Chemical mapping of a 170-nucleotide RNA with 2A3 and DMS. The data come from the RNA Mapping Database (RMDB), library 15KLIB. The 2A3 profile rests on 10,079 reads. Reactivities are given for positions 27 through 129. For DMS, 5,298 sequencing reads were counted. 2A3 adducts were read by reverse transcription with SuperScript II with manganese. The reactions ran in a buffer of 150 mM KOAc, 10 mM MgCl2 and 150 mM bicine (pH 8.5), at 24 C.
RNA sequence: GGGAACGACUCGAGUAGAGUCGAAAACAUUUUCGAGCGCAUUGAUUAUAGUGAUGCUGUAUCCUACAAGUCUAGUACAACGUAUAAACUGACUGUAGGUGACAUCUUCGUACUUACCUCUCACUCUGACGGAACGACUUCGGUCGUUCCAAAAGAAACAACAACAACAAC
Reactivity to 2A3 in 0.01 (KOAc 150mM, MgCl2 10mM, bicine 150mM(pH8.5), 24C), signal-to-noise 5, nucleotides 027 to 129: c030a010u060u000u090u160c030g010a000g010c080g020c020a020u020u060g030a040u100u130a030u140a100g120u100g050a040u000g010c050u040g030u050a060u020c020c000u000a000c010a200a040g000u000c050u190a000g030u020a070c060a200a080c220g070u090a020u010a150a180a010c000u000g000a000c000u000g020u020a010g000g000u020g000a010c000a020u020c010u070u020c030g030u030a010c030u020u030a020c000c000u000c000u000c010a050c000u020c000u020g040a030c030
Reactivity to DMS in 0.01 (KOAc 150mM, MgCl2 10mM, bicine 150mM(pH8.5), 24C), signal-to-noise 4, nucleotides 027 to 129: c090a000u020u060u030u000c060g000a070g020c070g040c100a110u000u040g050a050u060u070a080u050a150g040u030g000a020u000g020c100u050g010u090a080u050c000c000u020a000c000a110a010g000u010c020u060a100g060u060a070c190a110a040c300g040u050a130u000a150a110a020c070u030g000a010c020u000g040u010a070g010g050u000g010a080c090a000u060c020u010u000c070g080u070a090c010u030u050a080c100c000u000c030u080c080a120c080u020c020u040g010a090c200